[RMDB]
RNA sequence: GGGAACGACUCGAGUAGAGUCGAAAACAGGGCAGUGAGAAGUUAGCGGAAAUUGAAGCAAUUCACUGCAUGGGAAUGACGAAUACCCAGGUACGGAACUACCUAAAUCAAGUGCUGAAGGUAUUGCGUUUGCUUAGCUGUUCGCAGCUAAGCAAACAAAAGAAACAACAACAACAAC
Reactivity to DMS in 0.01 (KOAc 150mM, MgCl2 10mM, bicine 150mM(pH8.5), 24C), signal-to-noise 2, nucleotides 027 to 126: c060a010g000g000g030c000a010g000u030g000a040g000a060a190g040u010u000a100g030c060g000g000a070a130a230u000u030g020a130a080g000c070a160a050u020u000c010a000c010u000g010c000a090u010g020g000g000a100a130u000g000a070c090g020a030a070u000a040c010c030c020a190g010g000u010a010c000g020g010a100a140c290u000a070c140c130u000a080a070a060u020c090a040a190g000u000g000c000u010g020a110a110g000g020u010a010u020u010g020c170
Reactivity to 2A3 in 0.01 (KOAc 150mM, MgCl2 10mM, bicine 150mM(pH8.5), 24C), signal-to-noise 2, nucleotides 027 to 126: c050a010g150g180g000c020a000g000u000g020a010g010a150a040g090u060u110a050g010c040g070g050a070a260a170u240u180g020a080a000g000c020a010a010u020u040c010a010c000u000g000c000a020u040g000g000g010a050a160u210g070a060c040g050a010a000u010a000c010c000c000a010g040g010u000a000c030g000g080a070a050c060u100a140c050c060u100a080a090a050u090c090a220a040g020u040g000c020u040g020a030a040g020g010u010a000u060u070g030c030